[RMDB]
RNA sequence: GGGAACGACUCGAGUAGAGUCGAAAAACAUUGGCCUUCGGGCCAAUGUACUGGAAAUAAAGCCGAAAGGCUACGCAUUCCUUAUUUGGCGUAAGCCUGCGAGAUUAUGUAAGUUCGCUUACAUAAAUAACUAAAUUGCAUUCGUGCAAUUUAGUUAAAAAGAAACAACAACAACAAC
Reactivity to 2A3 in 0.01 (KOAc 150mM, MgCl2 10mM, bicine 150mM(pH8.5), 24C), signal-to-noise 6, nucleotides 027 to 126: a000c000a000u000u000g010g000c010c020u030u030c300g040g010g000c000c000a000a000u000g000u000a010c030u060g050g140a040a120a130u220a110a190a010g040c030c020g070a150a070a010g000g000c000u000a010c020g010c010a060u100u130c030c000u130u170a250u150u190u200g090g000c000g010u020a090a060g000c000c010u010g010c050g030a160g020a090u060u050a010u050g010u000a010a010g010u000u110c210g010c100u010u010a000c000a000u020a010a080a030
Reactivity to DMS in 0.01 (KOAc 150mM, MgCl2 10mM, bicine 150mM(pH8.5), 24C), signal-to-noise 7, nucleotides 027 to 126: a050c000a000u000u000g010g000c000c000u000u010c180g040g020g020c000c000a000a000u000g000u000a040c130u000g010g000a050a060a100u010a080a110a110g010c020c020g000a110a090a080g010g010c010u000a010c070g010c060a170u000u000c060c040u010u010a090u010u010u000g010g010c010g010u010a060a110g020c010c000u000g010c110g000a130g010a150u000u000a010u000g000u000a010a010g010u000u010c230g020c010u000u000a000c000a000u000a010a030a120
Annotation
This 177-nucleotide RNA was probed chemically with 2A3 and DMS. It was measured as part of the RMDB library M2PK50. For 2A3 the reverse transcriptase was SuperScript II with manganese. For 2A3, 7,885 sequencing reads were counted.